[RMDB]
RNA sequence: GGGAACGACUCGAGUAGAGUCGAAAAUUCGGAUGCCCAGGUCGGACCGCGAGGAGGUGGAGAUACCAUGCCGACCCGAAGAAGGAAAGGAGGACACGGACGACAAACCGUAGGUACUCUUGCCCUUGUAUCAGCGAGUUCGCUCGCUGAAAAAGAAACAACAACAACAAC
Reactivity to 2A3 in 0.01 (KOAc 150mM, MgCl2 10mM, bicine 150mM(pH8.5), 24C), signal-to-noise 5, nucleotides 027 to 129: u080u050c020g070g020a010u070g020c010c010c010a030g020g060u050c030g040g010a050c000c000g020c050g000a030g030g010a000g010g010u010g010g030a120g000a040u090a040c000c040a040u070g020c030c010g000a010c000c010c010g050a050a030g050a040a000g030g000a020a000a000g040g010a020g010g010a000c020a010c000g020g040a070c040g030a060c170a030a110a020c030c020g030u050a070g000g030u090a030c010u000c000u040u060g000c000c000c000u080u110g060u060a090
Reactivity to DMS in 0.01 (KOAc 150mM, MgCl2 10mM, bicine 150mM(pH8.5), 24C), signal-to-noise 5, nucleotides 027 to 129: u000u000c070g040g020a160u000g020c050c020c040a100g010g050u000c000g000g040a120c000c070g000c010g050a110g000g000a070g000g000u000g030g020a070g000a120u020a080c030c070a070u000g020c000c000g010a050c040c000c080g040a110a120g000a070a000g020g030a060a130a030g000g000a040g050g000a140c090a070c000g040g010a020c060g010a090c300a020a030a020c050c000g020u020a050g020g070u050a020c000u020c050u040u070g020c270c020c020u000u000g020u000a090